[RMDB]
Structure probing data (DMS and 2A3) for a 177-nucleotide construct. The 2A3 profile rests on 5,181 reads.
RNA sequence: GGGAACGACUCGAGUAGAGUCGAAAAGACAAAUGCAGCAUAUUAGGCUAAGCAGGAAAGGGACGGUAGCUCCUGGUGACAGUUCAUACGGUGUGAUGCAUCUGCGUCGUGCACACAUGCACCCAAACUCACUGUGUCUAUUCGUAGACACAGUGAGAAAAGAAACAACAACAACAAC
Reactivity to DMS in 0.01 (KOAc 150mM, MgCl2 10mM, bicine 150mM(pH8.5), 24C), signal-to-noise 4, nucleotides 027 to 126: g010a080c060a070a110a110u000g010c060a030g020c020a060u010a090u000u010a100g010g000c040u010a060a110g000c050a040g010g000a040a090a070g010g000g000a070c080g020g020u000a070g000c060u000c050c010u000g000g020u000g010a070c090a030g020u000u000c080a080u010a090c110g000g010u000g030u000g000a080u000g010c010a030u000c090u010g000c080g020u020c090g020u000g000c020a040c050a040c060a050u000g000c070a070c010c010c050a070a080a180
Reactivity to 2A3 in 0.01 (KOAc 150mM, MgCl2 10mM, bicine 150mM(pH8.5), 24C), signal-to-noise 4, nucleotides 027 to 126: g050a010c010a020a080a030u110g010c010a030g000c030a010u050a080u250u160a110g060g000c010u050a070a010g010c010a020g080g020a080a050a050g030g010g010a010c060g040g020u050a040g030c020u020c020c000u040g020g040u030g030a050c020a040g020u050u090c030a070u080a130c070g040g000u030g030u040g020a150u030g000c000a000u040c060u120g050c030g060u140c030g010u040g010c020a020c000a000c000a050u090g050c020a070c010c010c020a030a050a080
The reactions ran in a buffer of 150 mM KOAc, 10 mM MgCl2 and 150 mM bicine (pH 8.5), at 24 C. It was measured as part of the RMDB library M2PK90. Values cover nucleotides 27 to 126.